[RMDB]
RNA sequence: GGGAACGACUCGAGUAGAGUCGAAAAAGUCUACUUUUCGAAGUAGACUGUGCUCCCUCUUGAUCGAGGUCUCACCGUGUCAUUGCCCACGACACUCGGGCGUAAUAGAUUGGUUCGCCAAUCUAAAGGAGAAGAAUCAGUUCGCUGAUUCUUCUCCAAAAGAAACAACAACAACAAC
Reactivity to DMS in 0.01 (KOAc 150mM, MgCl2 10mM, bicine 150mM(pH8.5), 24C), signal-to-noise 3, nucleotides 027 to 126: a010g010u000c000u000a000c000u000u000u000u020c160g020a020a000g010u000a000g000a000c000u000g000u010g020c180u000c020c010c010u000c060u010u000g010a080u000c090g000a070g000g000u000c030u000c050a110c100c060g010u000g000u000c040a190u010u010g000c040c010c010a110c140g000a040c060a080c060u000c110g000g000g000c040g000u000a060a130u000a010g010a020u000u000g010g010u000u000c260g020c000c000a000a020u000c010u000a010a090a100
Reactivity to 2A3 in 0.01 (KOAc 150mM, MgCl2 10mM, bicine 150mM(pH8.5), 24C), signal-to-noise 2, nucleotides 027 to 126: a000g010u000c000u000a010c000u060u060u030u130c200g050a010a010g010u000a000g010a000c000u000g010u060g010c020u030c000c020c020u000c000u020u150g080a130u090c030g010a030g020g050u040c030u010c030a040c030c030g020u030g020u020c050a080u040u180g080c010c000c010a020c030g020a020c010a020c010u040c050g020g020g000c030g010u050a120a070u000a110g020a000u000u000g000g030u000u050c190g040c030c010a000a020u000c000u020a010a050a050

This 177-nucleotide RNA was probed chemically with DMS and 2A3. In probing experiments dimethyl sulfate is read out at A N1 and C N3, which are open when not base-paired. For 2A3 the reverse transcriptase was SuperScript II with manganese. The data come from the RNA Mapping Database (RMDB), library M2PK50. For DMS, 3,738 sequencing reads were counted. Conditions: 150 mM KOAc, 10 mM MgCl2 and 150 mM bicine (pH 8.5), 24 C.